[RMDB]
RNA sequence: GGGAACGACUCGAGUAGAGUCGAAAAAUCGGAUUAUGCUAGAGUCACAAGGCGAUCAUGUACCAAAGGAUCAGAGAAAUCAUAGAAGAGCCUUGAUAGCAUUUUUGCUAGACAGCCAAUUUGAUUCCGUCAGUCGUAUAUUCGUAUACGACUGACGAAAAGAAACAACAACAACAAC
Reactivity to DMS in 0.01 (KOAc 150mM, MgCl2 10mM, bicine 150mM(pH8.5), 24C), signal-to-noise 2, nucleotides 027 to 126: a070u000c050g000g000a070u000u000a090u000g000c000u010a160g020a110g020u010c100a300c050a050a030g000g000c000g020a140u000c050a050u000g020u020a130c130c100a070a070a060g010g020a050u000c060a040g000a110g020a100a060a070u000c020a050u000a150g000a090a110g010a300g010c050c020u000u010g000a300u010a030g020c010a040u000u010u000u000u000g010c020u050a050g020a050c080a040g010c050c210a090a070u000u000u000g000a060u000u000c050
Reactivity to 2A3 in 0.01 (KOAc 150mM, MgCl2 10mM, bicine 150mM(pH8.5), 24C), signal-to-noise 1, nucleotides 027 to 126: a000u040c010g030g020a010u000u050a060u150g000c010u000a020g000a040g230u000c000a020c010a070a000g000g000c000g010a020u050c020a020u050g030u080a090c000c020a100a070a110g150g000a080u120c070a040g020a020g090a180a130a020u070c000a000u090a130g070a110a010g010a100g020c000c000u020u010g010a040u040a020g020c020a030u100u130u100u220u090g000c020u000a060g040a070c020a000g000c040c030a020a000u030u000u000g020a010u040u100c000
This 177-nucleotide RNA was probed chemically with DMS and 2A3. For DMS the reverse transcriptase was MarathonRT. The reactions ran in a buffer of 150 mM KOAc, 10 mM MgCl2 and 150 mM bicine (pH 8.5), at 24 C. The data come from the RNA Mapping Database (RMDB), library OK2TRN. 2A3 adducts were read by reverse transcription with SuperScript II with manganese. Values are in units of 0.01, from 0 to 300, in steps of 10.